[RMDB]
RNA sequence: GGGAACGACUCGAGUAGAGUCGAAAACAUGGUGGCAAGUACGUCGCGAUAUUGCACCACCUGCAAUAGAAGCGUAGACAUCAACUGUAGCGAGAGCUACUCAACUUAUGGACCUUAGAGCAUGCGAAGACGACGGGUCCUGUCGGAAUUCGCUAGACCGGUAUGAUAGCUUCGGCUAUCAUACCGGAAAAGAAACAACAACAACAAC
Reactivity to 2A3 in 0.01 (KOAc 150mM, MgCl2 10mM, bicine 150mM(pH8.5), 24C), signal-to-noise 1, nucleotides 027 to 156: c050a040u030g060g010u020g020g030c120a080a010g050u170a080c070g010u010c070g000c010g080a080u000a020u050u000g000c020a010c060c000a000c000c000u020g000c020a020a020u050a050g040a110a000g020c000g020u060a090g000a080c010a030u060c030a070a260c090u040g000u020a000g010c000g000a010g000a020g100c000u040a010c000u000c080a040a050c020u190u070a180u260g080g000a010c000c000u010u020a030g000a080g040c070a060u140g010c000g030a000a030g030a100c000g000a000c000g030g030g100u040c000c030u020g000u000c040g000g030a160a210u060u000c000g000c000u020a030g000a100